The record gives the reactivity of an RNA of 207 nucleotides to 2A3.
The reactions ran in a buffer of 150 mM KOAc, 10 mM MgCl2 and 150 mM bicine (pH 8.5), at 24 C.
RNA sequence: GGGAACGACUCGAGUAGAGUCGAAAACCACACAUUCGUGUGUGGAAAAAACCUUUGUGUUAGUUAAUGAACUACCUCCGACGACGUCUUGCCCAUUGGGCAAGACAUCAGGAGGCAUUUACUAACACUCUGGUAAAAACAGCGGUUCGCCGCUGAAACCCAGUUUUCCUUUCGAGGAAAACUGGGUAAAAGAAACAACAACAACAAC
Reactivity to 2A3 in 0.01 (KOAc 150mM, MgCl2 10mM, bicine 150mM(pH8.5), 24C), signal-to-noise 1, nucleotides 027 to 156: c000c000a000c010a000c000a020u050u180c300g030u020g000u010g010u040g010g080a150a110a000a110a000a040c000c000u000u020u010g020u000g000u000u010a000g000u010u000a000a000u020g050a040a110c110u150a140c150c000u000c000c020g130a160c070g020a020c030g020u010c000u000u000g000c000c040c090a300u210u300g020g000g060c000a000a010g000a040c000a020u020c000a000g000g000a000g000g040c000a000u000u000u020a000c000u000a020a000c000a000c000u000c000u000g000g010u070a040a050a000a020a000c000a000g040c020g030g030u030u050c080g040c080c020g030c020u020g010a190a010
Background: The 2A3 profile rests on 533 reads.